[RMDB]
RNA sequence: GGGAACGACUCGAGUAGAGUCGAAAAUUGACUCAACACGGGAACAUUUACCAGGUACGAACAUAAGUGUGUAAGACAGAUUGAUAGCUCUUUCUCGAAUCUAUGGGUGGUGGUGCAUGGCCGUUCUCGAUCAUAGCAACUUCGGUUGCUAUGAUCGAAAAGAAACAACAACAACAAC
Reactivity to 2A3 in 0.01 (KOAc 150mM, MgCl2 10mM, bicine 150mM(pH8.5), 24C), signal-to-noise 4, nucleotides 027 to 126: u090u090g000a030c000u000c010a000a040c010a030c030g030g000g040a070a060c010a060u060u030u020a180c060c020a020g090g000u050a050c050g060a210a020c050a050u070a150a130g030u070g040u000g060u200a050a000g040a040c030a050g050a060u090u240g020a050u110a060g010c020u030c000u070u100u020c020u010c020g100a100a090u060c020u100a060u110g040g030g000u080g010g000u030g020g050u010g000c020a020u030g050g020c020c010g010u060u000c010u000
Reactivity to DMS in 0.01 (KOAc 150mM, MgCl2 10mM, bicine 150mM(pH8.5), 24C), signal-to-noise 2, nucleotides 027 to 126: u000u030g030a020c030u000c020a060a040c090a060c050g020g030g000a080a100c150a230u000u000u000a060c090c010a130g010g000u000a060c070g000a100a100c080a050u000a120a070g000u000g010u000g010u060a100a100g000a060c050a030g000a050u010u060g020a090u010a020g040c110u000c020u000u000u000c000u000c000g000a100a060u020c110u000a040u000g000g010g110u000g000g000u000g000g000u010g030c040a070u010g020g010c030c010g000u000u000c060u000